This 177-nucleotide RNA was probed chemically with 2A3 and DMS. The 2A3 profile rests on 712 reads. Reactivities are given for positions 27 through 126.
RNA sequence: GGGAACGACUCGAGUAGAGUCGAAAACUGGGAUAUCAUUCAUAGAGAGAACAAGUCGUACUACGUGGGAAAAGUCCUAGGUUAUCUGUACGGGGACAAAAUCCUUAACAAAGGCCAGAGCGCUGAAAGUGCUCACACCAUUCGUGGUGUGAGCACUAAAAGAAACAACAACAACAAC
Reactivity to 2A3 in 0.01 (KOAc 150mM, MgCl2 10mM, bicine 150mM(pH8.5), 24C), signal-to-noise 1, nucleotides 027 to 126: c000u040g000g000g000a000u000a140u220c140a210u140u000c000a000u240a160g070a000g000a000g110a150a000c150a300a050g120u160c070g040u090a050c000u000a050c070g020u030g000g040g000a140a000a100a050g010u000c000c000u010a060g000g180u000u130a000u110c120u000g000u040a000c000g000g000g000g000a000c000a060a050a000a060u040c000c000u000u050a090a020c000a060a000a000g000g080c000c010a020g000a010g090c170g090c000u000g090a170a000
Reactivity to DMS in 0.01 (KOAc 150mM, MgCl2 10mM, bicine 150mM(pH8.5), 24C), signal-to-noise 1, nucleotides 027 to 126: c000u020g000g000g000a080u000a000u020c030a050u030u110c170a080u020a210g010a080g040a020g070a120a140c120a090a030g000u000c000g000u040a040c040u000a090c180g010u010g010g000g000a010a060a140a170g020u000c080c000u000a080g000g000u000u000a030u020c070u070g000u010a010c230g020g030g030g000a000c050a040a100a010a210u000c000c040u000u050a100a040c080a000a060a110g000g060c000c030a100g000a060g000c070g050c050u000g000a010a040
It was measured as part of the RMDB library OK1LIB.